[RMDB]
Structure probing data (DMS) for a 177-nucleotide construct. DMS adducts were read by reverse transcription with MarathonRT.
RNA sequence: GGGAACGACUCGAGUAGAGUCGAAAAGCCCUCCGCUUCGGCGGAGGGCAAACAUCUUACCGCCCUCUCAAAAAGAAGUUGAAAGAGAGGGCGGUUUGCGAAAAAGCAAAAGCUUCGGCUUUUGCAAUCUCAUUAGAUUCUUCGGAAUCUAAUGAGAAAAAGAAACAACAACAACAAC
Reactivity to DMS in 0.01 (KOAc 150mM, MgCl2 10mM, bicine 150mM(pH8.5), 24C), signal-to-noise 1, nucleotides 027 to 126: g010c000c000c000u000c000c000g040c000u000u020c290g030g030c000g050g020a040g030g020g030c010a010a030a050c040a120u000c000u000u000a010c000c000g030c000c000c000u000c000u000c000a090a080a130a140a090g000a160a140g020u020u010g000a150a160a210g000a010g040a000g020g000g030c000g000g000u000u000u000g010c120g010a070a090a040a110a130g010c000a000a010a010a010g010c010u000u000c230g010g030c000u030u000u000u000g000c000a020a010
Source information:
It was measured as part of the RMDB library M2PK50. The DMS profile rests on 1,016 reads.